[RMDB]
RNA sequence: GGGAACGACUCGAGUAGAGUCGAAAAACAUUAGGGAUUCAAAGAAAUAUUAGAUUUAAGCUCACACUGGUCAAAAGGAACCAAGAUACAAAGAACUCUGAGCUGUCAUCGUCCCCAUCUCUGUGAGCAUUUGACAAAAGUUCGCUUUUGUCAAAUGAAAAGAAACAACAACAACAAC
Reactivity to DMS in 0.01 (KOAc 150mM, MgCl2 10mM, bicine 150mM(pH8.5), 24C), signal-to-noise 8, nucleotides 027 to 126: a110c040a070u020u030a060g010g000g000a050u010u030c090a060a100a110g000a070a090a070u040a090u030u030a140g000a070u010u000u010a150a060g010c010u000c000a050c150a100c110u010g000g020u020c050a080a090a120a150g000g010a090a060c030c030a030a060g000a110u020a070c210a060a090a100g000a060a120c100u020c100u010g000a030g010c020u000g000u010c090a040u010c040g000u000c000c000c000c050a050u010c010u000c050u000g000u010g000a090g010
Reactivity to 2A3 in 0.01 (KOAc 150mM, MgCl2 10mM, bicine 150mM(pH8.5), 24C), signal-to-noise 8, nucleotides 027 to 126: a000c040a050u150u190a050g040g010g040a050u140u100c110a080a170a070g120a070a190a040u210a090u120u110a070g020a060u020u100u150a060a000g000c000u010c010a000c010a020c060u040g040g000u040c030a090a110a110a130g110g010a050a020c000c010a030a030g030a080u110a100c110a050a180a010g070a110a030c040u010c040u120g000a000g020c010u020g040u030c010a030u020c010g040u020c010c000c010c000a050u020c020u010c010u020g070u030g050a000g030
Structure probing data (DMS and 2A3) for a 177-nucleotide construct. It was measured as part of the RMDB library OK1LIB. For 2A3, 7,633 sequencing reads were counted. The reactions ran in a buffer of 150 mM KOAc, 10 mM MgCl2 and 150 mM bicine (pH 8.5), at 24 C. For DMS the reverse transcriptase was MarathonRT. The DMS profile rests on 17,353 reads.